[RMDB]
RNA sequence: GGGAACGACUCGAGUAGAGUCGAAAAAGCCUGCCGCGCCUGGAUUACUGCGGUUCAGUUCUUGUCCGCCGGGCAAGCCAGUCCCGCGGGGCGAAUUGGUCUCGGAACUUAACCCUAAGUAUACCUUGCUCCAUCUGAAUUUCGAUUCAGAUGGAGCAAAAGAAACAACAACAACAAC
Reactivity to 2A3 in 0.01 (KOAc 150mM, MgCl2 10mM, bicine 150mM(pH8.5), 24C), signal-to-noise 1, nucleotides 027 to 126: a000g010c010c000u050g040c050c000g040c020g010c020c000u000g040g010a100u110u130a050c040u000g030c010g070g020u010u000c000a020g000u040u130c000u120u050g080u040c000c120g120c070c030g000g000g000c070a080a000g010c040c000a000g100u220c000c010c000g090c030g010g020g000g000c020g040a120a140u120u130g070g010u000c000u050c100g010g010a050a000c020u060u020a050a100c000c000c000u040a080a000g040u000a070u020a060c010c000u000u000